Chemical mapping of a 207-nucleotide RNA with DMS and 2A3. Reactivities are given for positions 27 through 156. It was measured as part of the RMDB library OK3TST. The RNA was probed in 150 mM KOAc, 10 mM MgCl2 and 150 mM bicine (pH 8.5) at 24 C. 2A3 adducts were read by reverse transcription with SuperScript II with manganese. The 2A3 profile rests on 2,458 reads.
RNA sequence: GGGAACGACUCGAGUAGAGUCGAAAAUUGCUUUAGUAGGAAAGGAGUGAGGAUCCUAAGUUCAUAACACCAUCCUUGGCUUCAAAAUUUAUCUUAAAACUAAUUAGCCUCAAUUUGAACUUCUUAUCUGGGAGAAUGGUCCUGACCUGUUCUCUGAUACUUUUAAUCAUUUCGAUGAUUAAAAGUAAAAAGAAACAACAACAACAAC
Reactivity to DMS in 0.01 (KOAc 150mM, MgCl2 10mM, bicine 150mM(pH8.5), 24C), signal-to-noise 2, nucleotides 027 to 156: u030u000g000c010u000u020u000a060g040u010a090g030g000a120a190a090g000g010a070g050u010g000a130g020g010a110u020c050c020u010a080a150g010u000u000c050a040u000a080a110c070a070c080c030a120u000c040c020u000u000g010g010c010u000u010c050a040a040a100a130u010u000u000a070u050c060u030u010a050a090a080a130c030u010a050a090u000u000a080g000c030c010u020c050a030a120u000u000u010g020a060a060c000u010u000c090u010u010a070u000c120u000g020g010g020a090g000a060a060u000g000g000u000c030c030u010g000a110c070c030u000g010u000u000c060u010c030u000g000a300
Reactivity to 2A3 in 0.01 (KOAc 150mM, MgCl2 10mM, bicine 150mM(pH8.5), 24C), signal-to-noise 5, nucleotides 027 to 156: u070u050g030c010u060u080u080a040g020u040a020g050g070a050a060a020g000g000a010g010u040g020a030g020g020a020u040c000c030u060a090a040g020u050u060c040a020u100a220a040c020a040c070c000a030u090c020c020u030u030g050g000c010u070u030c080a090a140a130a220u110u240u090a160u090c030u080u210a130a140a040a080c040u050a070a130u140u060a060g010c020c000u020c060a040a060u040u020u080g020a030a010c000u040u000c020u100u170a170u110c060u080g020g060g040a040g020a050a040u050g010g020u030c010c030u060g070a100c020c000u010g010u020u020c060u000c000u050g030a070